An RNA of 177 nucleotides, treated with 2A3 and DMS and read out base by base. The 2A3 profile rests on 2,303 reads. For DMS, 5,574 sequencing reads were counted. The reactions ran in a buffer of 150 mM KOAc, 10 mM MgCl2 and 150 mM bicine (pH 8.5), at 24 C.
[RMDB]
RNA sequence: GGGAACGACUCGAGUAGAGUCGAAAAUCCUCGAGGAUCCCGGCGAGCAGGUUCCGUAUGGUUCGGGAGUCGUCGACCACGAGCGCCUUCUUCAUGGAUACCUCCUGGGAGUGAGUAUGCAAAAACGAUAUGUCGUAUUCUUCGGAAUACGACAUAUAAAAGAAACAACAACAACAAC
Reactivity to 2A3 in 0.01 (KOAc 150mM, MgCl2 10mM, bicine 150mM(pH8.5), 24C), signal-to-noise 2, nucleotides 027 to 126: u010c000c020u000c040g010a020g020g010a000u070c070c030c020g030g030c110g000a010g000c050a020g020g010u060u000c010c000g020u080a100u210g050g030u110u090c000g020g010g040a090g160u100c000g090u010c020g040a030c000c010a020c020g030a060g020c030g000c000c000u030u010c000u010u020c020a040u070g000g010a000u110a300c000c010u000c010c020u100g010g050g020a020g050u100g020a070g050u130a070u150g110c070a000a030a090a090a000c050g050
Reactivity to DMS in 0.01 (KOAc 150mM, MgCl2 10mM, bicine 150mM(pH8.5), 24C), signal-to-noise 5, nucleotides 027 to 126: u000c010c000u010c180g000a030g000g010a070u000c180c040c080g010g030c150g010a040g010c120a050g020g000u000u000c020c020g000u000a110u000g010g000u010u010c030g020g000g010a120g010u010c030g010u000c060g000a090c020c010a060c040g000a090g010c170g000c020c000u000u010c010u010u000c050a300u010g000g010a060u000a100c050c010u000c010c040u000g000g010g010a070g020u000g000a090g000u010a050u000g010c100a070a050a060a090a080c210g000